[RMDB]
Chemical mapping of a 207-nucleotide RNA with 2A3 and DMS.

RNA sequence: GGGAACGACUCGAGUAGAGUCGAAAAACGCAUCAUACGUGAUGCGUGAACUACAGUUCCGCUCCUCUAGCACACAGAGGUCAAUUGGGUGCGACCCCCCCCUCUCCCGUGGGUCAACGGGAACCAAAAAAGACCCUUUAGUUCGCUAAAGGGUCAACCUACCUUUAUGCUUCGGCAUAAAGGUAGGAAAAGAAACAACAACAACAAC
Reactivity to 2A3 in 0.01 (KOAc 150mM, MgCl2 10mM, bicine 150mM(pH8.5), 24C), signal-to-noise 2, nucleotides 027 to 156: a010c000g000c030a010u010c010a000u030a090c240g130u030g010a000u010g000c000g000u000g010a020a000c030u110a090c070a100g010u030u000c010c030g070c060u040c000c000u010c020u000a030g000c010a000c000a000c000a030g010a000g020g000u050c040a040a050u090u080g050g000g000u010g020c030g190a230c000c000c000c020c010c000c010c000u030c020u000c010c000c010g010u010g000g000g020u100c060a010a000c010g000g010g010a000a000c000c000a040a030a080a030a000a000g000a010c000c000c000u000u000u000a020g010u030u050c160g000c140u000a010a000a000g000g000g000u000c000a000a000
Reactivity to DMS in 0.01 (KOAc 150mM, MgCl2 10mM, bicine 150mM(pH8.5), 24C), signal-to-noise 1, nucleotides 027 to 156: a000c000g020c000a000u000c000a110u010a080c290g030u000g050a020u000g030c000g050u000g000a020a090c080u000a120c100a190g000u000u000c020c020g030c010u000c000c010u000c140u000a120g060c120a130c130a050c050a010g050a040g000g010u000c150a010a000u020u010g010g030g030u000g000c040g000a270c000c000c000c000c030c040c020c030u000c040u030c030c000c000g080u000g010g030g000u000c170a050a040c010g070g000g010a040a040c050c050a010a060a060a040a060a180g000a090c000c000c000u000u020u000a020g050u000u010c270g060c010u000a020a000a000g000g000g000u000c020a000a010
Values cover nucleotides 27 to 156.